[RMDB]
RNA sequence: GGGAACGACUCGAGUAGAGUCGAAAAUCGUCUUAAUUCGUUAAGACGAACUCACGGAUUCUGUCCGUAAUCACAGAAAUAAAAUAAAACUAACAAAAUAAAAUCAUCUCAUGUUCGCAUGAGAUAACAUGGUCUAUGUUUUCGAACAUAGACCAUGAAAAGAAACAACAACAACAAC
Reactivity to 2A3 in 0.01 (KOAc 150mM, MgCl2 10mM, bicine 150mM(pH8.5), 24C), signal-to-noise 2, nucleotides 027 to 126: u040c000g000u000c000u040u010a060a020u030u100c140g090u030u010a010a000g010a000c010g010a030a020c000u010c000a000c000g000g030a120u060u000c010u060g000u000c010c010g000u050a090a120u170c030a020c000a020g070a040a070a010u220a070a090a030a030u220a060a140a050a070c050u200a090a040c050a070a130a050a100u260a170a150a050a060u120c040a030u010c000u000c000a000u030g000u060u040c210g000c110a000u010g000a000g000a020u000a000a010
Reactivity to DMS in 0.01 (KOAc 150mM, MgCl2 10mM, bicine 150mM(pH8.5), 24C), signal-to-noise 1, nucleotides 027 to 126: u000c000g000u020c000u000u000a000a010u000u010c230g010u000u000a020a000g010a010c020g020a010a140c010u020c030a100c000g000g000a110u000u000c020u000g000u030c000c000g020u000a120a050u000c280a010c000a010g010a030a050a210u000a080a060a100a100u000a110a130a120a180c060u020a030a070c030a010a130a070a110u000a020a090a060a160u000c110a020u000c000u000c000a000u010g020u020u080c280g000c000a000u010g000a000g010a000u000a050a070

Chemical mapping of a 177-nucleotide RNA with 2A3 and DMS. In probing experiments dimethyl sulfate is read out at A N1 and C N3, which are open when not base-paired. The reactions ran in a buffer of 150 mM KOAc, 10 mM MgCl2 and 150 mM bicine (pH 8.5), at 24 C. For 2A3 the reverse transcriptase was SuperScript II with manganese.